[RMDB]
RNA sequence: GGGAACGACUCGAGUAGAGUCGAAAAGGCACUCAUGGACACCCAUAGAACUCCACGAGUUCACGGUAAACCUGAUACACAGGUGUGAACUGUUUACCGUGGAGAAGUGUCCUUCUAUGGGAGUGCAGCAGAGCGGAACAUUCGUGUUCUGCUCUGCAAAAGAAACAACAACAACAAC
Reactivity to DMS in 0.01 (KOAc 150mM, MgCl2 10mM, bicine 150mM(pH8.5), 24C), signal-to-noise 9, nucleotides 027 to 126: g010g010c010a010c000u010c040a120u010g010g010a110c220a090c060c040c030a040u000a030g000a040a130c020u000c030c000a000c000g000a130g010u000u000c030a000c000g020g010u010a090a150a040c000c040u000g000a190u020a140c300a190c010a030g000g010u000g010u010g010a070a040c020u000g000u000u000u000a030c220c010g010u000g000g000a010g000a040a070g010u010g010u000c030c060u000u000c030u000a030u000g000g000g000a020g010u000g010c000a120
Reactivity to 2A3 in 0.01 (KOAc 150mM, MgCl2 10mM, bicine 150mM(pH8.5), 24C), signal-to-noise 5, nucleotides 027 to 126: g080g000c010a000c010u030c020a110u140g020g000a010c010a020c030c010c010a020u040a040g060a050a040c000u020c010c010a010c020g070a100g060u000u010c010a000c010g010g020u050a100a030a020c010c010u010g020a080u140a190c170a010c010a120g000g060u060g030u030g140a060a020c000u010g030u040u060u040a040c030c010g000u000g000g010a000g000a010a010g020u020g030u020c020c000u030u030c020u020a040u030g050g000g000a010g000u000g000c000a000